This 177-nucleotide RNA was probed chemically with 2A3 and DMS.

[RMDB]
RNA sequence: GGGAACGACUCGAGUAGAGUCGAAAAGUGAUGCCCUCAGAUGGUCUGGGCUGCACGCGCACUACAGUGGUCAUAGAAAUGAAACGAUAGAAUUAAAGAUGAUCGAGAGGGAAUGAGCUUUGUAAGACGAUCGAUCUAAGUUCGCUUAGAUCGAUCGAAAAGAAACAACAACAACAAC
Reactivity to 2A3 in 0.01 (KOAc 150mM, MgCl2 10mM, bicine 150mM(pH8.5), 24C), signal-to-noise 4, nucleotides 027 to 126: g090u050g040a070u210g010c000c000c000u030c050a070g010a040u100g040g000u030c030u040g040g000g000c010u030g000c000a010c050g090c020g040c030a020c060u150a030c040a070g040u040g070g030u060c040a040u060a060g160a090a170a060u160g020a060a000a010c040g030a050u090a160g100a100a000u150u130a120a080a020g080a040u220g050a000u020c000g030a030g010a000g260g000g040a020a050u120g020a050g000c010u000u090u090g130u140a020a010g040a050
Reactivity to DMS in 0.01 (KOAc 150mM, MgCl2 10mM, bicine 150mM(pH8.5), 24C), signal-to-noise 3, nucleotides 027 to 126: g000u000g020a200u020g000c020c010c000u030c070a110g010a070u000g010g030u020c000u000g000g010g020c020u000g030c030a080c120g000c100g080c030a050c040u000a020c080a130g010u010g000g010u020c030a070u010a040g030a040a120a060u010g010a070a040a140c100g020a140u000a050g000a100a090u020u020a100a120a080g010a070u010g000a010u010c020g010a130g000a030g000g010g020a040a060u020g000a300g010c030u000u000u000g010u020a070a130g000a170
Record summary:
The reactions ran in a buffer of 150 mM KOAc, 10 mM MgCl2 and 150 mM bicine (pH 8.5), at 24 C.